Structure probing data (DMS) for a 177-nucleotide construct.
Values cover nucleotides 27 to 126.
The reactions ran in a buffer of 150 mM KOAc, 10 mM MgCl2 and 150 mM bicine (pH 8.5), at 24 C.
Reactivities are rounded to 0.1 and cut off at 0 and 3.

[RMDB]
RNA sequence: GGGAACGACUCGAGUAGAGUCGAAAAUCAUCCAAGUUCGCUUGGAUGAAACGGUACUGUAGCUAAAAACGAUCCGAGGCAACAGUACCAUAAAAGGAUCGACAGCCUGCAAAUUCGUUUGCAGGAAAAUAUUUUUUACCUUCGGGUAAAAAAUAUUAAAAGAAACAACAACAACAAC
Reactivity to DMS in 0.01 (KOAc 150mM, MgCl2 10mM, bicine 150mM(pH8.5), 24C), signal-to-noise 1, nucleotides 027 to 126: u000c000a000u000c000c020a000a000g010u000u030c230g050c000u010u010g020g000a000u010g050a020a130a060c220g000g030u000a000c010u000g010u000a040g010c010u000a050a060a120a030a080c080g010a010u000c030c000g020a180g000g000c000a080a010c000a030g000u000a000c020c000a020u020a010a090a190a100g000g000a040u000c020g020a300c300a130g000c000c000u000g000c000a000a020a050u030u020c230g020u000u000u000g020c010a030g000g000a000a020